[RMDB]
Record summary: Conditions: 150 mM KOAc, 10 mM MgCl2 and 150 mM bicine (pH 8.5), 24 C. This 177-nucleotide RNA was probed chemically with 2A3 and DMS. The 2A3 profile rests on 9,351 reads. Reactivities are given for positions 27 through 126. For DMS the reverse transcriptase was MarathonRT. For 2A3 the reverse transcriptase was SuperScript II with manganese. The data come from the RNA Mapping Database (RMDB), library OK1LIB.
RNA sequence: GGGAACGACUCGAGUAGAGUCGAAAAGGAUGCGGGUCGACACUUCGGAGCGGCUUCUGACGUCGUCGUCAGCGAUCGGGGUCCAGCACGUCGAAGUAGAUCGCAAAAUGCUGGUCUUUCUGUGCCAUAAAUGAGCUACUUUCGAGUAGCUCAUUUAAAAAGAAACAACAACAACAAC
Reactivity to 2A3 in 0.01 (KOAc 150mM, MgCl2 10mM, bicine 150mM(pH8.5), 24C), signal-to-noise 9, nucleotides 027 to 126: g120g020a040u080g030c050g020g050g060u070c020g020a020c010a020c070u030u030c020g040g020a070g030c030g040g000c000u090u030c040u090g050a070c040g300u110c020g010u040c010g040u070c100a060g100c030g050a040u120c060g000g000g020g000u010c020c020a000g000c010a010c030g060u100c030g060a040a010g030u120a020g000a080u010c000g000c020a050a080a010a010u220g020c060u060g000g030u010c030u010u100u010c060u090g120u130g050c020c010a060
Reactivity to DMS in 0.01 (KOAc 150mM, MgCl2 10mM, bicine 150mM(pH8.5), 24C), signal-to-noise 6, nucleotides 027 to 126: g000g010a090u010g010c070g010g000g020u020c010g020a100c120a050c040u020u020c040g000g000a070g020c070g010g000c060u000u000c080u010g000a060c030g000u030c090g000u010c030g010u010c130a100g000c050g000a070u020c040g000g000g000g000u000c010c140a050g000c010a080c070g000u030c020g000a030a080g010u020a130g010a070u000c020g000c060a070a080a090a100u020g020c040u000g010g000u010c040u010u010u030c040u040g000u020g000c020c050a110